[RMDB]
RNA sequence: GGGAACGACUCGAGUAGAGUCGAAAACAAAUACAGAAGAGUGGGGCUGGUUUCAAACAUUAGUUAUGCCCGAAAAGUAGACCUAUGUGUUUGUCUGUAGGGUCUACCUGACAUUAACACUAAAGGAAUGUGUCAAGUGAUUCGUCACUUGACACAUAAAAGAAACAACAACAACAAC
Reactivity to DMS in 0.01 (KOAc 150mM, MgCl2 10mM, bicine 150mM(pH8.5), 24C), signal-to-noise 2, nucleotides 027 to 126: c040a080a070a080u020a130c140a090g010a130a030g000a080g010u010g020g020g020g000c060u000g000g000u000u000u010c110a100a090a100c070a110u000u000a070g000u000u000a030u010g000c030c000c080g010a020a070a080a110g000u010a030g000a080c020c000u000a050u000g000u000g010u020u000u000g000u010c050u000g000u000a040g000g010g010u000c020u010a020c010c050u000g000a060c090a040u000u000a050a140c090a060c030u000a060a140a100g000g020a160
Reactivity to 2A3 in 0.01 (KOAc 150mM, MgCl2 10mM, bicine 150mM(pH8.5), 24C), signal-to-noise 1, nucleotides 027 to 126: c010a010a030a040u200a040c040a000g090a090a010g040a170g060u100g040g010g000g040c020u030g120g000u070u000u020c020a080a090a050c010a080u110u050a030g020u020u080a050u120g000c000c000c010g020a010a030a030a000g020u030a000g000a010c010c010u070a100u130g180u020g040u040u150u120g200u070c100u050g040u030a020g080g020g000u000c030u010a050c000c000u040g040a000c000a050u090u110a080a010c040a010c070u040a160a000a000g070g020a150
Overview
Source: RMDB library OK2TRN, as collected in RNAgym. The record gives the reactivity of an RNA of 177 nucleotides to DMS and 2A3. The RNA was probed in 150 mM KOAc, 10 mM MgCl2 and 150 mM bicine (pH 8.5) at 24 C. The DMS profile rests on 1,458 reads.